Structure probing data (DMS and 2A3) for a 177-nucleotide construct. DMS (dimethyl sulfate) methylates the pairing face of unpaired adenines and cytosines. The RNA was probed in 150 mM KOAc, 10 mM MgCl2 and 150 mM bicine (pH 8.5) at 24 C. DMS adducts were read by reverse transcription with MarathonRT.
RNA sequence: GGGAACGACUCGAGUAGAGUCGAAAACGCCAUGGCGACAUUCGGGCGGCCAUCGCGCUUGGUAAGCUGCUGGCGAAGCGUGAACAGGGUGGCAAGCUCCUCCUUGCGGCUUUCAUCCGUAAAGAGAAUUAAAUGACCAGUUCGCUGGUCAUUUAAUAAAAGAAACAACAACAACAAC
Reactivity to DMS in 0.01 (KOAc 150mM, MgCl2 10mM, bicine 150mM(pH8.5), 24C), signal-to-noise 5, nucleotides 027 to 126: c090g000c020c030a060u010g010g000c030g010a080c090a150u010u010c120g020g000g020c040g000g020c050c040a060u010c110g010c030g030c030u000u000g010g010u010a060a130g010c040u000g020c040u000g000g010c030g000a050a050g000c020g020u000g010a070a100c110a150g020g010g020u010g000g020c060a070a090g020c040u000c040c010u000c030c030u000u010g020c040g000g000c160u000u000u010c150a080u010c020c000g010u010a040a050a050g000a120g000a170
Reactivity to 2A3 in 0.01 (KOAc 150mM, MgCl2 10mM, bicine 150mM(pH8.5), 24C), signal-to-noise 1, nucleotides 027 to 126: c050g020c020c020a060u040g030g010c030g020a070c020a110u110u110c080g090g030g020c040g040g000c010c000a040u030c020g020c000g000c040u020u020g070g000u030a050a030g010c010u070g000c030u060g060g000c030g020a030a030g010c040g050u060g050a100a030c020a070g050g000g030u050g030g000c010a040a010g020c010u030c010c000u000c000c000u010u050g030c010g010g000c000u060u150u100c050a090u020c000c000g010u030a040a080a060g070a010g040a090